[RMDB]
RNA sequence: GGGAACGACUCGAGUAGAGUCGAAAAUAUAUGCAAACUUGUAUCAGGGCCGCAGCGAUUGGGGAGCGUGGAAGGCGUCUUGCGAGCUGCGGAGUGGAGCUCCCCGCGUACCCGCACACACAUUACAACUCACCCAUAGUUUCGACUAUGGGUGAGUAAAAGAAACAACAACAACAAC
Reactivity to DMS in 0.01 (KOAc 150mM, MgCl2 10mM, bicine 150mM(pH8.5), 24C), signal-to-noise 2, nucleotides 027 to 126: u000a060u010a040u040g000c170a030a040a090c200u030u020g020u000a100u000c090a050g020g000g030c000c000g090c040a030g000c000g020a090u020u000g020g010g020g000a030g000c010g020u050g020g000a150a080g010g000c040g000u020c030u000u010g010c030g010a130g020c030u030g000c040g040g000a040g010u000g000g000a210g000c040u020c000c010c000c000g030c070g010u000a130c020c060c020g060c080a060c160a110c090a000c090a110u060u010a050c180a130
Reactivity to 2A3 in 0.01 (KOAc 150mM, MgCl2 10mM, bicine 150mM(pH8.5), 24C), signal-to-noise 3, nucleotides 027 to 126: u160a000u050a000u110g070c050a080a060a120c110u090u120g050u070a080u100c040a070g000g070g000c000c000g000c000a010g000c020g160a160u100u180g030g000g000g000a010g040c060g030u020g050g090a070a000g080g030c040g060u060c040u030u130g100c080g030a050g000c000u020g000c000g030g000a020g020u060g010g010a000g010c010u020c000c000c000c000g000c010g000u050a050c020c000c000g030c000a020c000a000c000a000c000a120u030u220a060c050a120
An RNA of 177 nucleotides, treated with DMS and 2A3 and read out base by base. For DMS the reverse transcriptase was MarathonRT. Conditions: 150 mM KOAc, 10 mM MgCl2 and 150 mM bicine (pH 8.5), 24 C. DMS (dimethyl sulfate) methylates the pairing face of unpaired adenines and cytosines.